[RMDB]
RNA sequence: GGGAACGACUCGAGUAGAGUCGAAAACAAUAAUAAACAUGUGUUAAAUGUCUUCUUUUGGGUCAGGAGUGGUCCUGGGAAAUGAGGAAACAUAAGUGAAUGAGAUUUGGUUCCUGACAUGAGAAGAUUUUGUGGAGCAAAUCGGACUUCGUUGAAAUAUUUUAGUACCUUUCGAGGUACUAAAAUAAAAAGAAACAACAACAACAAC
Reactivity to DMS in 0.01 (KOAc 150mM, MgCl2 10mM, bicine 150mM(pH8.5), 24C), signal-to-noise 2, nucleotides 027 to 156: c020a090a140u000a090a120u000a110a100a100c080a070u010g030u010g020u000u040a060a120a090u010g020u000c040u010u010c040u000u010u000u010g040g040g040u010c020a000g000g000a110g050u000g000g010u000c080c000u000g040g000g000a060a090a080u010g040a050g020g000a070a050a090c080a080u010a070a160g040u020g000a080a100u000g020a160g020a100u010u000u000g020g010u000u010c010c020u010g010a090c020a120u010g010a090g030a060a100g000a100u000u000u010u020g010u010g000g020a090g040c050a030a060a070u000c050g010g000a150c160u000u000c050g020u000u000g010a100a160a140
Reactivity to 2A3 in 0.01 (KOAc 150mM, MgCl2 10mM, bicine 150mM(pH8.5), 24C), signal-to-noise 3, nucleotides 027 to 156: c020a030a100u190a130a130u200a130a180a040c090a100u160g020u050g040u110u180a100a160a160u110g010u020c030u000u010c000u050u060u080u070g150g020g000u010c010a000g050g020a030g020u100g050g030u040c000c000u010g050g030g040a050a080a060u170g030a020g000g050a020a090a030c020a080u100a160a040g050u030g170a060a060u110g010a040g030a140u030u050u090g080g010u060u040c000c000u010g030a000c020a030u120g010a030g030a040a000g000a010u070u060u060u050g040u050g010g030a040g020c020a030a070a070u090c050g030g060a050c040u050u060c100g050u040u040g030a060a040a060

Chemical mapping of a 207-nucleotide RNA with DMS and 2A3.
The reactions ran in a buffer of 150 mM KOAc, 10 mM MgCl2 and 150 mM bicine (pH 8.5), at 24 C.
It was measured as part of the RMDB library OK3TST.
For DMS the reverse transcriptase was MarathonRT.
Reactivities are given for positions 27 through 156.